[RMDB]
RNA sequence: GGGAACGACUCGAGUAGAGUCGAAAAAGGCUAGUCGGCCUGGAGAUAUUUCAGCCUGGAAAUGAGUGUAUGGGGUGUAUCAUGCAGGAAUCUCGAUAACGCUACGAAUCAUUACAGGUUGUGUGCCGAUUUUAGGGCGAUUCGUCGCCCUAAAAUCAAAAGAAACAACAACAACAAC
Reactivity to DMS in 0.01 (KOAc 150mM, MgCl2 10mM, bicine 150mM(pH8.5), 24C), signal-to-noise 2, nucleotides 027 to 126: a000g010g000c040u000a100g040u030c130g010g000c000c000u000g010g020a130g010a140u040a030u030u010u000c020a030g010c010c000u010g020g000a060a030a010u000g000a010g020u020g000u000a070u020g010g030g000g000u000g000u000a030u030c030a080u000g000c080a130g040g050a070a010u040c010u030c100g000a040u000a040a080c020g000c030u000a050c030g020a030a220u000c000a030u000u000a130c010a000g000g010u030u000g020u000g000u010g030c090c060